[RMDB]
RNA sequence: GGGAACGACUCGAGUAGAGUCGAAAACUAAUGGACGUGUAACGAGUUGGAACGUUGAUCUCUCGACAGUGGAGUCGGGAAUUUACACGUUUCGUUUUGAAACUGGUGCAUAUUUUGAUUCCCUGGACAGCACCAUUUUAUUCGUAAAAUGGUGCUGAAAAGAAACAACAACAACAAC
Reactivity to 2A3 in 0.01 (KOAc 150mM, MgCl2 10mM, bicine 150mM(pH8.5), 24C), signal-to-noise 2, nucleotides 027 to 126: c010u020a060a070u100g060g040a020c050g060u010g030u050a190a030c010g000a020g040u040u050g060g000a040a010c020g010u010u030g050a060u000c010u010c010u000c110g020a010c020a050g230u150g300g160a120g050u070c010g000g000g000a010a000u010u020u060a050c070a000c020g000u000u020u000c000g000u040u020u040u220g130a080a070a010c030u130g170g000u070g000c010a000u020a100u050u100u010u020g060a080u060u000c000c010c010u030g080g060a040
Reactivity to DMS in 0.01 (KOAc 150mM, MgCl2 10mM, bicine 150mM(pH8.5), 24C), signal-to-noise 3, nucleotides 027 to 126: c140u000a070a060u000g000g010a050c020g020u010g010u000a050a180c050g000a040g020u000u000g000g000a020a020c020g020u000u010g000a050u010c140u000c000u000c000g000a020c000a160g040u020g030g000a150g010u000c000g010g000g000a010a020u000u010u010a100c200a020c010g010u000u000u000c010g020u000u000u000u000g020a090a120a020c020u000g000g040u000g000c020a020u000a060u000u000u000u010g000a210u000u000c010c000c000u000g000g020a300